RNA sequence: GGGAACGACUCGAGUAGAGUCGAAAAAGCAUACCAGCUCGUACGCGAGCUGGUAUGCAAAAAUUGGUGUAGCCUUACCGUAGUAGGCACAAAAACGUCAGAUGGAUCUACGGAUCCAGCUGACGAAAAAAGUGUUUUGUGUUCGCACAAAACACAAGACGCUAACUAUGUUCGCAUAGUUAGCGUCAAAAGAAACAACAACAACAAC
Reactivity to 2A3 in 0.01 (KOAc 150mM, MgCl2 10mM, bicine 150mM(pH8.5), 24C), signal-to-noise 1, nucleotides 027 to 156: a000g000c010a000u000a010c000c010a050g000c020u010c030g030u020a040c290g000c010g130a000g040c040u000g030g010u000a020u000g000c020a000a010a000a000a000u060u120g000g000u030g160u220a010g000c010c000u000u000a000c000c050g020u000a020g030u000a000g000g030c020a000c020a020a050a010a000a000c030g000u000c000a000g000a010u020g020g000a010u020c010u000a080c210g070g000a000u000c000c000a000g010c000u000g000a000c000g000a010a020a000a000a000a000g020u060g000u000u030u000u000g010u000g020u080u050c130g050c100a000c000a000a000a030a000c000a000c000a010a010